RNA sequence: GGGAACGACUCGAGUAGAGUCGAAAAAACACUGUCCAGUUUAUGGAUCCGACUACUUUGCAAACCGCGGAUCUGUCACCAUCUGUGUACUGGAGGGCUCCAUUCAACGCCCUGGCUGAUGUGACCACAUCACUCCCAGCUUCGGCUGGGAGUGAUGAAAAGAAACAACAACAACAAC
Reactivity to DMS in 0.01 (KOAc 150mM, MgCl2 10mM, bicine 150mM(pH8.5), 24C), signal-to-noise 1, nucleotides 027 to 126: a100a040c100a080c050u030g010u000c020c000a040g000u000u010u010a020u000g010g000a020u000c030c040g000a130c080u000a070c090u010u020u000g010c170a040a070a070c300c170g010c040g000g000a050u000c050u000g010u020c050a000c050c140a020u020c150u020g030u000g010u000a050c070u000g050g030a140g000g030g000c010u000c100c030a090u010u000c120a050a030c180g010c010c000c080u000g010g000c030u030g010a030u000g010u000g010a150c030c100a120
Reactivity to 2A3 in 0.01 (KOAc 150mM, MgCl2 10mM, bicine 150mM(pH8.5), 24C), signal-to-noise 1, nucleotides 027 to 126: a000a020c060a000c040u060g030u040c010c000a010g030u000u130u130a160u100g030g000a010u030c000c010g050a080c060u090a090c040u020u160u170g100c110a130a080a080c120c060g000c020g000g000a030u000c050u040g060u020c020a000c060c040a050u050c070u150g050u050g030u230a110c030u040g020g050a040g000g040g000c030u000c050c050a150u150u100c030a080a070c120g020c000c010c000u020g040g000c080u020g040a030u030g070u010g060a040c000c010a030

The record gives the reactivity of an RNA of 177 nucleotides to DMS and 2A3.
Reactivities are given for positions 27 through 126.
For DMS the reverse transcriptase was MarathonRT.
The reactions ran in a buffer of 150 mM KOAc, 10 mM MgCl2 and 150 mM bicine (pH 8.5), at 24 C.
The data come from the RNA Mapping Database (RMDB), library OK2TST.